[RMDB]
RNA sequence: GGGAACGACUCGAGUAGAGUCGAAAAUUGAUUCACAUCACACCCAAAUACAAACGGUUUAAAAAAGAGGAUGCUUUCAAAAUUUCAAGGUAACAAAAAGAGGUGCAAAUGUAUAUAUUACUAAACUUAUCUUAGUCUAUUUCGAUAGACUAAGAUAAAAAGAAACAACAACAACAAC
Reactivity to 2A3 in 0.01 (KOAc 150mM, MgCl2 10mM, bicine 150mM(pH8.5), 24C), signal-to-noise 5, nucleotides 027 to 126: u030u040g030a020u120u130c070a040c020a090u060c020a020c000a030c010c000c030a020a080a040u250a040c100a020a100a030c050g070g090u060u130u220a150a190a040a010a010a000g110a030g070g000a010u030g030c020u060u070u060c060a080a110a100a160u020u100u060c020a050a040g080g030u100a110a030c040a030a060a040a000a010g090a040g020g010u020g020c000a010a040a110u050g040u020a050u010a010u010a020u240u090a080c040u090a100a090a050c010u010
Reactivity to DMS in 0.01 (KOAc 150mM, MgCl2 10mM, bicine 150mM(pH8.5), 24C), signal-to-noise 2, nucleotides 027 to 126: u050u000g000a060u030u010c160a080c150a050u010c000a050c110a120c020c000c020a070a090a100u050a150c150a040a070a050c090g000g000u010u010u000a000a020a110a120a070a100g040a090g000g010a030u010g000c070u000u020u010c030a020a030a030a070u000u020u040c020a030a120g030g000u020a050a020c080a020a040a060a080a060g020a070g000g020u000g000c010a020a040a050u020g020u000a040u040a100u020a050u010u010a050c030u010a040a080a030c080u060
An RNA of 177 nucleotides, treated with 2A3 and DMS and read out base by base. The DMS profile rests on 2,303 reads. It was measured as part of the RMDB libraries RFM100 and RFMREP. As a SHAPE reagent, 2A3 marks flexible, mostly unpaired nucleotides at the ribose 2'-OH.